[RMDB]
RNA sequence: GGGAACGACUCGAGUAGAGUCGAAAAUUGAUUCAAUUGGCUGUCCAAAAUAAUUAUCAGCCCAUUCCUGCAUUUCAUCCGGAACGUUGUUGAAUGAUGAUAAUGGAAAUGGAGGUGUCCAUGUCUCUCAUCCGAACUGAUUCGUCAGUUCGGAUGAAAAAGAAACAACAACAACAAC
Reactivity to DMS in 0.01 (KOAc 150mM, MgCl2 10mM, bicine 150mM(pH8.5), 24C), signal-to-noise 1, nucleotides 027 to 126: u000u000g000a140u000u000c090a020a080u000u000g000g000c060u020g020u090c050c020a060a090a070a110u000a040a020u010u000a060u020c050a050g000c030c060c050a090u000u000c010c020u000g060c050a090u000u010u000c030a080u010c100c190g030g010a110a060c120g000u000u010g000u000u000g000a100a060u020g000a080u000g000a040u020a030a020u000g000g000a050a050a230u000g000g000a010g000g020u020g000u020c040c000a050u000g030u020c020u000c030
Reactivity to 2A3 in 0.01 (KOAc 150mM, MgCl2 10mM, bicine 150mM(pH8.5), 24C), signal-to-noise 2, nucleotides 027 to 126: u180u090g060a070u000u300c130a030a110u040u090g020g000c040u040g110u030c040c040a070a000a000a210u180a090a060u070u080a030u120c000a010g000c010c000c050a030u020u060c000c000u000g000c000a020u000u000u050c060a060u020c100c030g040g030a070a060c080g040u020u020g010u040u070g010a020a160u030g060a030u050g030a000u020a080a080u080g190g000a020a120a000u070g060g010a010g000g170u110g020u000c000c000a020u030g090u000c030u000c010